[RMDB]
RNA sequence: GGGAACGACUCGAGUAGAGUCGAAAAGAUAUGGACCAUGAACUACGGAAUGAAGGUCGAAGAACUCGGAAACGAGGGAGACCGUAGUUCCGCAUGGUCCUAAGUCAAAGCAUGGUUCGCCAUGCAAUCCAUGAUUGGGGUUCGCCCCAAUCAUGGAAAAAGAAACAACAACAACAAC
Reactivity to 2A3 in 0.01 (KOAc 150mM, MgCl2 10mM, bicine 150mM(pH8.5), 24C), signal-to-noise 1, nucleotides 027 to 126: g020a010u050a050u200g020g000a020c000c000a000u020g010a040a100c160u190a040c300g000g030a010a000u050g070a250a050g020g000u000c070g070a110a070g010a020a030c010u010c010g000g040a060a050a060c020g000a000g000g030g060a040g000a010c010c010g020u060a000g000u000u000c010c000g000c010a000u010g020g010u000c000c010u000a010a010g000u000c030a050a050a040g040c000a010u000g000g080u070u100c250g010c030c010a000u000g000c010a000a030
Reactivity to DMS in 0.01 (KOAc 150mM, MgCl2 10mM, bicine 150mM(pH8.5), 24C), signal-to-noise 1, nucleotides 027 to 126: g020a010u010a300u000g000g000a000c000c000a030u000g010a090a080c290u010a300c040g010g000a000a000u000g000a170a300g000g000u000c000g010a110a140g000a190a100c040u000c000g000g000a090a080a190c000g030a000g010g000g000a080g000a010c000c010g020u040a300g000u000u000c000c060g000c030a010u010g000g000u000c010c030u010a000a030g000u000c030a100a050a070g010c000a000u000g000g000u010u030c300g000c040c000a030u000g000c000a070a060